Annotation
An RNA of 177 nucleotides, treated with 2A3 and DMS and read out base by base. The data come from the RNA Mapping Database (RMDB), library OK2TRN. The 2A3 profile rests on 1,059 reads. The reactions ran in a buffer of 150 mM KOAc, 10 mM MgCl2 and 150 mM bicine (pH 8.5), at 24 C. Reactivities are given for positions 27 through 126. The DMS profile rests on 808 reads.
RNA sequence: GGGAACGACUCGAGUAGAGUCGAAAACUACUCAUGAUCUAUGAGUACGUCGUACGUAGGCCGGCCAUAGGCGCGGCCGUACGGCCCGAUCAUGCGCGCGCGACACACUGGCCGCACAGUACCAGCGUGAUGUCUCCCGAUUCGUCGGGAGACAUCAAAAAGAAACAACAACAACAAC
Reactivity to 2A3 in 0.01 (KOAc 150mM, MgCl2 10mM, bicine 150mM(pH8.5), 24C), signal-to-noise 1, nucleotides 027 to 126: c000u040a000c020u000c000a030u060g130a260u020c070u170a070u120g050a040g080u020a070c060g010u000c000g010u020a080c010g060u100a100g130g000c000c000g000g060c040c000a300u230a300g090g000c200g000c010g300g000c000c000g000u000a000c000g010g000c020c000c000g020a030u040c010a030u090g000c090g020c000g000c010g000c010g060a020c020a010c010a000c150u040g060g000c030c000g060c060a070c010a010g010u030a050c010c010a000g010c040g060
Reactivity to DMS in 0.01 (KOAc 150mM, MgCl2 10mM, bicine 150mM(pH8.5), 24C), signal-to-noise 1, nucleotides 027 to 126: c100u010a070c000u000c000a020u000g020a100u010c070u010a110u020g010a080g020u000a020c180g020u010c020g030u040a030c000g040u010a230g010g030c020c000g000g000c000c000a270u000a230g000g020c030g050c000g020g010c010c000g000u000a020c000g010g000c030c060c060g020a030u010c060a090u000g000c040g000c090g000c050g010c020g000a080c130a090c090a030c090u010g010g010c040c020g050c150a060c120a100g030u010a100c070c060a040g010c110g000